[RMDB]
RNA sequence: GGGAACGACUCGAGUAGAGUCGAAAACAUGCAGAUCGUCCGCGUCGCCAUUCUUGCGGACAGCAGGUUGACCGAGAUGGCCCUGCCCGCGGAGUUGCCACUGCGCGAAAUCCUGCCCGCGGUACAAGCAGUCACCAAAUUUCGAUUUGGUGACUGCAAAAGAAACAACAACAACAAC
Reactivity to DMS in 0.01 (KOAc 150mM, MgCl2 10mM, bicine 150mM(pH8.5), 24C), signal-to-noise 1, nucleotides 027 to 126: c150a110u010g000c050a080g030a040u000c090g010u010c040c010g010c010g000u010c110g000c010c070a150u000u030c050u010u010g000c020g000g000a030c010a050g030c090a050g000g010u010u000g040a180c040c000g010a110g000a160u000g020g000c060c050c000u000g000c040c030c000g010c010g000g000a150g000u010u000g010c080c170a070c050u010g000c020g040c130g000a090a050a050u010c080c010u000g010c000c060c020g010c010g020g000u000a050c210a040a100
Reactivity to 2A3 in 0.01 (KOAc 150mM, MgCl2 10mM, bicine 150mM(pH8.5), 24C), signal-to-noise 2, nucleotides 027 to 126: c000a020u140g000c020a030g060a130u060c040g040u010c020c060g000c040g070u040c030g010c010c020a080u180u150c040u120u300g000c010g000g000a000c040a000g010c000a000g030g000u120u190g150a250c010c030g020a140g090a210u300g000g010c030c000c000u000g000c000c010c000g000c050g000g020a100g030u050u050g010c030c000a140c060u140g010c050g040c000g080a120a070a000u070c000c000u040g000c000c020c020g030c070g040g040u110a040c010a070a080